[RMDB]
RNA sequence: GGGAACGACUCGAGUAGAGUCGAAAAGCCCCAUUUGACUGGAUAUUCAAGGGUUUACGAGCAGAAAUGGUAUGAUUGCAAGGUUCGAAACUAAUUAAAUACCCUAGCGCUUAAAGACACUCACCUCCCGGAUUUCAAUAUUCGUAUUGAAAUCCGGAAAAGAAACAACAACAACAAC
Reactivity to 2A3 in 0.01 (KOAc 150mM, MgCl2 10mM, bicine 150mM(pH8.5), 24C), signal-to-noise 3, nucleotides 027 to 126: g000c000c000c000c000a060u070u050u100g090a050c070u040g010g030a040u070a080u120u060c050a060a060g010g090g000u010u080u030a080c030g000a050g010c050a030g080a200a130a050u110g080g030u080a030u080g080a220u120u120g050c060a080a050g110g000u020u050c040g070a110a030a020c040u040a000a110u150u080a160a080a110u080a020c000c000c030u020a020g020c030g000c030u010u030a050a080a050g020a010c030a020c020u010c010a020c040c020u010c030
Reactivity to DMS in 0.01 (KOAc 150mM, MgCl2 10mM, bicine 150mM(pH8.5), 24C), signal-to-noise 1, nucleotides 027 to 126: g000c070c000c000c090a140u020u000u000g000a130c030u000g010g000a040u030a020u040u000c070a030a110g030g000g000u020u000u000a070c110g000a090g010c020a050g000a080a090a050u020g040g000u000a170u010g000a110u020u000g070c070a040a060g010g040u000u010c070g000a020a060a060c070u000a020a050u020u020a020a060a050u000a050c000c000c070u010a020g020c110g000c100u000u020a030a150a130g000a140c100a070c070u000c020a030c050c070u000c110